[RMDB]
RNA sequence: GGGAACGACUCGAGUAGAGUCGAAAAUUUCCGAGUGCCUCUUCUCUCCCCCUCCGGGUUCUCCUCGCAUCGGACUGGCUCAUUCUCGGAGAGGGCGGACGGUCCUGAGAACUCUUAUCUUCCUGCUCACGUGGCGGGUUCGCCCGCCACAAAAGAAACAACAACAACAAC
Reactivity to 2A3 in 0.01 (KOAc 150mM, MgCl2 10mM, bicine 150mM(pH8.5), 24C), signal-to-noise 2, nucleotides 027 to 129: u020u010u000c000c000g010a040g020u010g070c020c000u030c000u000u030c040u000c000u000c000c000c020c040c000u000c010c010g000g000g000u030u040c000u040c000c000u130c070g000c040a080u080c030g000g000a060c010u000g010g000c000u050c090a140u150u010c100u010c020g010g000a080g000a030g000g000g020c000g030g030a030c000g020g020u010c000c000u060g040a080g000a010a000c020u040c000u050u020a080u080c030u040u010c020c010u030g030c010u040c030a040c100
Reactivity to DMS in 0.01 (KOAc 150mM, MgCl2 10mM, bicine 150mM(pH8.5), 24C), signal-to-noise 2, nucleotides 027 to 129: u000u030u050c010c050g000a060g030u040g030c070c000u070c080u000u020c010u050c000u010c000c000c010c010c020u010c030c030g020g040g010u020u020c020u000c000c040u060c000g040c000a160u030c070g080g010a060c030u000g000g030c040u020c090a170u030u030c030u020c070g050g000a090g000a080g000g020g050c110g000g090a050c070g120g000u000c050c020u000g020a000g000a020a090c070u040c050u000u000a080u030c130u000u040c060c040u020g030c020u010c130a120c160